[RMDB]
RNA sequence: GGGAACGACUCGAGUAGAGUCGAAAAGGAAUCUCUUCUGCUUGUGACGGUCUUGCUUCAGCUUAUAGGGCGAAUUCCUUUGAUGUACCUACAUUCUGCGCAAACCGUUCUGCAAUGUGUAAUUGGUUACUUGUUAAAUCUUCGGAUUUAACAAGUAAAAAGAAACAACAACAACAAC
Reactivity to DMS in 0.01 (KOAc 150mM, MgCl2 10mM, bicine 150mM(pH8.5), 24C), signal-to-noise 7, nucleotides 027 to 126: g020g010a080a090u000c040u000c030u000u010c070u000g010c040u000u010g000u010g010a020c020g000g000u000c180u010u010g000c040u000u000c020a020g010c060u010u000a050u000a020g000g000g000c080g020a120a100u010u000c090c170u000u000u000g010a130u010g010u000a080c020c010u010a020c060a010u000u000c010u000g040c300g000c020a010a020a020c020c010g020u000u000c010u000g000c020a040a020u010g030u010g010u000a090a050u000u010g010g000u000
Reactivity to 2A3 in 0.01 (KOAc 150mM, MgCl2 10mM, bicine 150mM(pH8.5), 24C), signal-to-noise 5, nucleotides 027 to 126: g070g020a090a090u010c020u020c000u180u030c030u040g040c010u060u070g050u090g070a000c010g020g000u030c060u090u020g000c000u140u160c000a010g000c000u040u020a020u040a040g020g000g000c050g060a070a080u140u140c040c000u080u030u150g090a100u120g030u130a240c000c000u010a010c010a030u030u000c000u010g000c010g000c010a000a010a020c000c010g020u030u000c010u030g010c010a020a070u100g030u030g030u120a100a120u100u060g080g010u020

Chemical mapping of a 177-nucleotide RNA with DMS and 2A3. For 2A3, 8,120 sequencing reads were counted. The reactions ran in a buffer of 150 mM KOAc, 10 mM MgCl2 and 150 mM bicine (pH 8.5), at 24 C. For DMS the reverse transcriptase was MarathonRT. Values cover nucleotides 27 to 126. DMS (dimethyl sulfate) methylates the pairing face of unpaired adenines and cytosines.